[RMDB]
RNA sequence: GGGAACGACUCGAGUAGAGUCGAAAAGAUAUGGAGCGUACAGACAUGAUCUUUCGGAAACGAAGGAUCAACAGCUGUCACGCUCCUAAGUCAAAUCCCUGGUUCUUCUUCGGAAGAACCAGGGAAAGUCACCAUUCAAGUUCGCUUGAAUGGUGACAAAAGAAACAACAACAACAAC
Reactivity to 2A3 in 0.01 (KOAc 150mM, MgCl2 10mM, bicine 150mM(pH8.5), 24C), signal-to-noise 1, nucleotides 027 to 126: g000a000u020a030u080g000g000a030g010c000g000u000a000c010a040g300a140c100a190u070g010a010u020c000u000u030u010c000g000g010a020a030a020c000g000a010a000g020g000a000u010c000a020a000c000a010g020c020u010g010u030c090a000c030g010c020u000c000c000u000a000a000g000u000c010a000a030a180u000c000c010c000u010g000g020u000u010c010u000u030c000u040u040c300g130g000a000a010g000a000a000c000c010a010g000g020g010a000a020a000
Reactivity to DMS in 0.01 (KOAc 150mM, MgCl2 10mM, bicine 150mM(pH8.5), 24C), signal-to-noise 1, nucleotides 027 to 126: g000a030u010a300u010g000g000a030g010c010g010u000a010c000a010g000a090c130a230u010g000a000u000c000u020u000u000c000g020g000a050a020a160c010g010a010a000g000g020a010u000c000a020a100c280a160g020c030u000g000u020c190a010c000g040c000u000c000c000u000a000a110g000u010c030a080a140a100u010c010c020c000u000g000g000u000u000c000u000u000c000u000u010c180g000g010a030a000g020a000a000c000c030a020g000g000g000a000a000a020
An RNA of 177 nucleotides, treated with 2A3 and DMS and read out base by base. The reactions ran in a buffer of 150 mM KOAc, 10 mM MgCl2 and 150 mM bicine (pH 8.5), at 24 C. DMS adducts were read by reverse transcription with MarathonRT.